[RMDB]
RNA sequence: GGGAACGACUCGAGUAGAGUCGAAAAAGUGAGUCAUCAAGGACGCUCUAAGACGAAAAGAAUUCAGGCAUUGAAAUUCAGGAAGGCACGUGAUAAGAGAGCUGGAUUUGAGAUUGAUAACAAUGAAUGAUGAUAACAUCUUCGGAUGUUAUCAUCAAAAAGAAACAACAACAACAAC
Reactivity to 2A3 in 0.01 (KOAc 150mM, MgCl2 10mM, bicine 150mM(pH8.5), 24C), signal-to-noise 6, nucleotides 027 to 126: a000g180u090g040a040g040u010c020a040u020c020a120a020g060g000a020c020g040c000u000c010u040a110a070g110a050c060g060a020a040a020a100g040a030a000u060u040c030a060g180g000c070a070u010u110g030a050a030a050u070u060c020a010g120g020a070a050g100g000c040a000c090g050u030g040a060u080a220a060g030a000g010a000g050c030u050g040g040a110u000u020u030g100a120g020a090u020u060g050a090u070a150a020c070a040a030u100g030a070a090
Reactivity to DMS in 0.01 (KOAc 150mM, MgCl2 10mM, bicine 150mM(pH8.5), 24C), signal-to-noise 6, nucleotides 027 to 126: a090g010u020g010a080g040u020c040a090u010c050a060a090g020g010a130c090g000c020u000c020u000a080a110g000a100c100g000a080a050a080a130g010a050a070u000u020c030a040g000g010c140a080u030u010g000a020a020a070u000u010c050a070g020g010a100a060g010g000c050a100c040g010u010g010a070u020a110a050g010a030g000a050g000c040u020g010g020a150u010u000u000g000a060g010a110u010u010g010a070u010a010a070c080a020a100u030g020a080a090